[RMDB]
RNA sequence: GGGAACGACUCGAGUAGAGUCGAAAAUUUGUCACUUAUUUCUAACACUGAGUAUAUCUGUACAGUUCUUAAUAGUAAAUGGCAUAAUAUCUUAUUCUCUGUAUUCUAUACAUUGUCAACCCCAUUCCUAGCUGAUAAUCAGUAGUCAAAAAUGGGACUAUUAGUGACGGUUCGCCGUCACUAAUAGAAAAGAAACAACAACAACAAC
Reactivity to 2A3 in 0.01 (KOAc 150mM, MgCl2 10mM, bicine 150mM(pH8.5), 24C), signal-to-noise 5, nucleotides 027 to 156: u040u030u030g030u020c030a020c030u060u050a030u070u150u050c080u080a070a000c020a010c090u010g020a020g100u090a120u070a110u300c100u100g130u140a100c020a050g020u060u050c040u080u250a140a130u070a050g030u030a020a090a070u030g000g000c010a010u020a130a020u030a190u070c060u110u090a100u150u040c050u000c010u000g050u040a150u130u100c090u140a110u070a090c040a060u070u150g100u120c040a080a110c000c000c000c010a000u010u030c010c020u060a140g070c010u070g050a090u120a190a040u130c010a000g040u070a040g120u170c120a060a050a010a050a020u040g000g010g020a050
Reactivity to DMS in 0.01 (KOAc 150mM, MgCl2 10mM, bicine 150mM(pH8.5), 24C), signal-to-noise 2, nucleotides 027 to 156: u020u020u000g050u010c020a080c040u010u000a040u000u000u000c030u010a030a100c020a060c030u000g010a220g030u000a130u010a090u000c050u020g010u010a140c000a040g040u000u010c030u010u010a000a080u000a030g040u010a040a000a040u000g000g000c010a050u000a100a080u000a080u000c050u000u000a190u000u000c030u000c020u010g010u000a080u000u000c070u000a110u000a080c040a070u010u000g000u020c040a030a090c050c020c020c020a080u000u000c030c020u020a130g000c050u020g000a190u000a040a130u000c020a090g020u000a100g030u000c070a030a030a060a030a050u010g020g000g020a260
Conditions: 150 mM KOAc, 10 mM MgCl2 and 150 mM bicine (pH 8.5), 24 C. Structure probing data (2A3 and DMS) for a 207-nucleotide construct. It was measured as part of the RMDB library OK3TST. For 2A3, 1,836 sequencing reads were counted. 2A3 adducts were read by reverse transcription with SuperScript II with manganese. Values cover nucleotides 27 to 156.